[RMDB]
RNA sequence: GGGAACGACUCGAGUAGAGUCGAAAAAAAACCAUUCGAGCUAGUCAAUGCGUGGCGUGUCUCUCUGCAGCGUGUUGGCGAAUGUAAAGAGUGACUAAGCAUGUAGUACCGAGGAUGUAGUAAUUUUGAAACUCGCGCAUCUUCGGAUGCGCGAGAACAAUUAUCUUUGGUUCGCCAAAGAUAAUUGAAAAGAAACAACAACAACAAC
Reactivity to 2A3 in 0.01 (KOAc 150mM, MgCl2 10mM, bicine 150mM(pH8.5), 24C), signal-to-noise 3, nucleotides 027 to 156: a000a000a000a010c030c010a030u070u050c060g030a020g020c020u060a020g040u020c040a040a020u020g010c020g030u040g050g000c060g030u050g120u020c050u000c020u010c040u220g010c000a020g000c010g000u030g030u030u040g010g000c000g000a030a020u070g020u110a050a060a060g040a030g020u030g020a020c040u040a050a000g020c010a030u070g020u070a060g040u040a060c000c070g010a010g040g010a020u050g010u030a040g050u040a090a210u120u150u100u130g110a090a040a030c000u000c000g030c000g010c000a000u000c010u040u050c150g070g000a000u020g000c010g000c000g000a000g000a010a000
Reactivity to DMS in 0.01 (KOAc 150mM, MgCl2 10mM, bicine 150mM(pH8.5), 24C), signal-to-noise 2, nucleotides 027 to 156: a040a020a070a110c020c000a130u010u000c010g010a180g000c030u000a130g010u000c000a070a080u000g010c020g030u000g020g050c030g000u000g020u020c060u000c060u000c040u000g010c030a070g010c020g000u000g040u000u010g030g010c000g030a090a050u000g020u000a050a070a080g010a070g010u000g010a050c050u010a060a050g030c020a050u000g000u000a050g030u000a090c000c010g010a100g010g010a070u000g020u000a060g010u010a070a060u000u000u000u020g000a080a060a110c020u000c010g030c000g000c000a010u010c010u000u010c300g050g020a020u000g000c050g000c010g010a000g000a020a090